Conditions: 150 mM KOAc, 10 mM MgCl2 and 150 mM bicine (pH 8.5), 24 C. This 177-nucleotide RNA was probed chemically with 2A3. For 2A3 the reverse transcriptase was SuperScript II with manganese. Source: RMDB library RFM100, as collected in RNAgym.
[RMDB]
RNA sequence: GGGAACGACUCGAGUAGAGUCGAAAAAUAAGCUAACAACAAGCAAAACAAUUCAUUCUUUCCCCUUUUUAGAAUGAAAUUCCUAAACUCCCUUUUUGACCAGUGUGGUUUACUCCCUUUUUCCACACCCAUAGGCGAUCUUCGGAUCGCCUAUGGGAAAAGAAACAACAACAACAAC
Reactivity to 2A3 in 0.01 (KOAc 150mM, MgCl2 10mM, bicine 150mM(pH8.5), 24C), signal-to-noise 2, nucleotides 027 to 126: a000u090a020a050g000c040u060a070a010c080a000a040c080a090a000g010c000a000a060a020a070c010a040a150u010u000c000a000u000u010c000u070u080u020c000c000c000c010u000u070u020u110u090a000g000a040a000u000g040a060a070a030u090u020c010c010u020a080a120a040c000u050c000c000c000u050u000u000u030u130g080a060c040c030a010g020u000g000u000g220g000u020u000u030a110c060u020c000c000c000u050u000u000u000u020c030c020a030c040a020